Structure probing data (2A3 and DMS) for a 177-nucleotide construct. DMS adducts were read by reverse transcription with MarathonRT. The RNA was probed in 150 mM KOAc, 10 mM MgCl2 and 150 mM bicine (pH 8.5) at 24 C. Source: RMDB library OK2TST, as collected in RNAgym.
RNA sequence: GGGAACGACUCGAGUAGAGUCGAAAAGUUAUCGAGAUUUAGCGGAGGGAUGUUAAAGCCUUCUGUUUGAACGCGGAUGAUGUUCUGCUGGUUUGGGGCAACCACGGCAAUCAUGUCGAGAUCGAUGAAUCCCUUGGGAUUUCGAUCCCAAGGGAUUAAAAGAAACAACAACAACAAC
Reactivity to 2A3 in 0.01 (KOAc 150mM, MgCl2 10mM, bicine 150mM(pH8.5), 24C), signal-to-noise 2, nucleotides 027 to 126: g040u040u080a080u100c050g030a030g020a280u060u100u160a020g020c000g000g000a010g000g040g020a040u090g140u300u300a220a030a040g010c000c000u000u030c000u010g030u060u040u090g040a070a010c040g000c040g040g000a000u000g010a000u010g070u120u030c090u070g000c060u020g040g000u030u030u080g040g010g000g000c020a020a010c010c000a020c020g000g000c040a000a060u030c050a050u060g040u080c020g020a020g000a190u080c050g000a010u070g000
Reactivity to DMS in 0.01 (KOAc 150mM, MgCl2 10mM, bicine 150mM(pH8.5), 24C), signal-to-noise 4, nucleotides 027 to 126: g020u010u000a050u000c010g020a050g010a200u000u000u000a050g000c000g030g010a060g010g010g010a070u000g010u010u010a080a100a170g010c000c000u000u000c010u000g010u000u000u000g030a020a070c140g020c100g000g010a000u000g010a030u000g000u010u000c060u000g010c160u000g010g000u000u000u010g020g010g040g040c240a100a050c040c010a070c040g000g000c130a070a100u010c070a030u000g010u010c010g020a150g000a080u010c030g000a070u000g010